[RMDB]
RNA sequence: GGGAACGACUCGAGUAGAGUCGAAAAGAGAUGGUGGCCUUCAUGGUCCGCUACACCUCCGGAUACCUGUGCGUUCCGCUGGACGGUGCCAUCUGCGACCGGCUGGGCCUGUUGCCCAUGUACGCGGGACGCAACACCAGUUCGCUGGUGUUGCGUCAAAAGAAACAACAACAACAAC
Reactivity to 2A3 in 0.01 (KOAc 150mM, MgCl2 10mM, bicine 150mM(pH8.5), 24C), signal-to-noise 4, nucleotides 027 to 126: g030a000g010a010u070g040g060u030g050g030c020c000u090u130c100a110u200g030g010u070c050c000g010c020u080a050c030a070c030c020u030c030c010g020g010a040u080a170c000c020u120g050u100g090c060g030u040u010c010c020g010c060u050g060g030a020c050g040g000u030g020c010c010a140u080c070u090g040c020g090a060c010c000g020g010c030u050g000g030g000c020c060u150g100u110u210g000c000c000c000a010u130g040u020a040c100g000c020g020g020
Reactivity to DMS in 0.01 (KOAc 150mM, MgCl2 10mM, bicine 150mM(pH8.5), 24C), signal-to-noise 5, nucleotides 027 to 126: g000a040g010a060u000g020g010u000g020g010c000c010u000u000c200a140u010g010g010u030c030c050g020c040u010a080c060a060c040c000u010c050c020g020g000a200u010a060c070c050u010g020u010g010c050g010u000u000c020c010g000c050u000g020g010a070c070g020g020u010g020c030c070a070u010c110u000g010c040g000a080c020c010g000g020c090u020g000g000g020c010c140u010g020u010u010g000c000c000c010a050u000g010u000a070c130g010c030g010g000